The record gives the reactivity of an RNA of 207 nucleotides to 2A3 and DMS. The RNA was probed in 150 mM KOAc, 10 mM MgCl2 and 150 mM bicine (pH 8.5) at 24 C. In probing experiments dimethyl sulfate is read out at A N1 and C N3, which are open when not base-paired. DMS adducts were read by reverse transcription with MarathonRT. The DMS profile rests on 4,423 reads. Reactivities are rounded to 0.1 and cut off at 0 and 3.
[RMDB]
RNA sequence: GGGAACGACUCGAGUAGAGUCGAAAAGUAGACUGGAAAGACAGCCUUGUAAUUAGGCCGGGUUCGGAGUAGGAUAUAGGAAUGCGAGGGCGUUUCGCACAUCGAGCGUAUCAAGCGCCGAUCCUCGCAUGUAGCUGACGGCCAGCGAAAAUAGCCGAAAUGAGUACACAUUCGUGUGUACUCAUUUAAAAGAAACAACAACAACAAC
Reactivity to 2A3 in 0.01 (KOAc 150mM, MgCl2 10mM, bicine 150mM(pH8.5), 24C), signal-to-noise 3, nucleotides 027 to 156: g060u050a020g010a090c060u030g040g020a070a090a040g040a050c070a010g010c000c010u080u070g100u170a120a220u190u150a040g010g000c000c030g050g000g000u080u150c020g020g010a020g020u040a010g000g040a020u050a000u040a130g090g070a080a030u000g000c000g000a000g010g020g000c010g000u080u130u250c090g000c020a050c010a040u010c010g010a080g050c010g000u050a090u300c150a170a050g040c010g000c000c000g000a030u030c010c000u000c020g000c000a000u020g000u020a000g000c000u000g000a010c010g000g000c000c000a000g000c000g040a040a060a040a000u050a030g000c000c000g000
Reactivity to DMS in 0.01 (KOAc 150mM, MgCl2 10mM, bicine 150mM(pH8.5), 24C), signal-to-noise 2, nucleotides 027 to 156: g020u000a040g020a090c000u000g040g020a110a060a140g000a150c050a100g000c000c010u000u000g020u010a090a130u000u000a070g010g030c020c060g060g000g010u000u010c050g010g000a100g020u000a040g010g000a090u000a040u000a130g030g020a080a060u010g020c000g010a070g000g020g010c040g010u010u000u000c050g040c090a080c110a130u000c030g000a120g040c020g000u000a200u010c200a030a120g000c010g030c060c010g000a050u000c020c000u000c030g070c020a030u000g020u000a140g000c000u000g000a090c010g020g010c000c030a100g020c000g000a050a040a050a150u000a080g010c000c000g020